[RMDB]
An RNA of 177 nucleotides, treated with DMS and 2A3 and read out base by base.
It was measured as part of the RMDB library OK2TST.
The RNA was probed in 150 mM KOAc, 10 mM MgCl2 and 150 mM bicine (pH 8.5) at 24 C.
RNA sequence: GGGAACGACUCGAGUAGAGUCGAAAAGAUUGGCACUGGUGGGUCAUGGAGCGCUCAUACAAGCCUAGUGGCAGUAGCCACUAUGAUCCCUAUGAUAGGGUACUACAACAUGGCAGUGUCAAAGCACAAGGCAACUGAAUUUCGAUUCAGUUGCCUUAAAAGAAACAACAACAACAAC
Reactivity to DMS in 0.01 (KOAc 150mM, MgCl2 10mM, bicine 150mM(pH8.5), 24C), signal-to-noise 2, nucleotides 027 to 126: g000a190u000u000g030g010c020a000c040u000g010g000u020g030g000g010u000c080a120u000g010g000a040g010c120g000c020u010c090a080u030a100c200a100a150g000c040c020u000a000g010u000g000g010c000a240g020u020a080g060c010c010a050c000u000a010u000g000a110u010c020c030c020u000a080u000g000a170u000a040g000g000g000u010a050c080u010a040c080a040a110c040a060u000g000g010c060a020g020u000g000u000c020a020a030a080g010c140a090c220
Reactivity to 2A3 in 0.01 (KOAc 150mM, MgCl2 10mM, bicine 150mM(pH8.5), 24C), signal-to-noise 1, nucleotides 027 to 126: g040a070u010u020g000g020c000a000c040u020g050g090u060g090g220g020u140c010a050u020g040g070a040g040c110g000c000u010c010a040u120a090c030a040a020g040c000c010u010a000g040u080g020g000c020a040g080u060a010g040c010c020a000c000u030a010u020g000a040u090c050c000c000u010a050u150g190a080u130a040g010g040g030u040a040c030u010a000c030a120a000c000a050u020g050g000c000a010g010u000g000u020c000a000a030a000g060c070a030c020